[RMDB]
RNA sequence: GGGAACGACUCGAGUAGAGUCGAAAAGAUAUGGACUGGACCGCUCGAUAAGUCGGUAUCGGAAACGAUACCCGACUUUUGACGAGCGAUCCAGUCCUAAGUCAAAACGUCUAGUUCGCUAGACGAACAAGCAUGAGAUCUUCGGAUCUCAUGCUUGAAAAGAAACAACAACAACAAC
Reactivity to DMS in 0.01 (KOAc 150mM, MgCl2 10mM, bicine 150mM(pH8.5), 24C), signal-to-noise 1, nucleotides 027 to 126: g000a040u000a280u000g000g000a030c000u000g010g010a030c020c010g040c000u000c000g050a110u000a010a020g020u000c000g000g010u020a010u000c000g020g010a170a120a060c020g020a000u010a000c070c020c000g000a000c000u000u000u000u000g000a180c220g000a010g000c000g000a000u010c000c000a010g010u000c000c000u000a000a090g000u000c020a170a050a230a190c030g030u000c000u040a020g010u000u000c250g020c010u000a010g040a020c000g000a060a090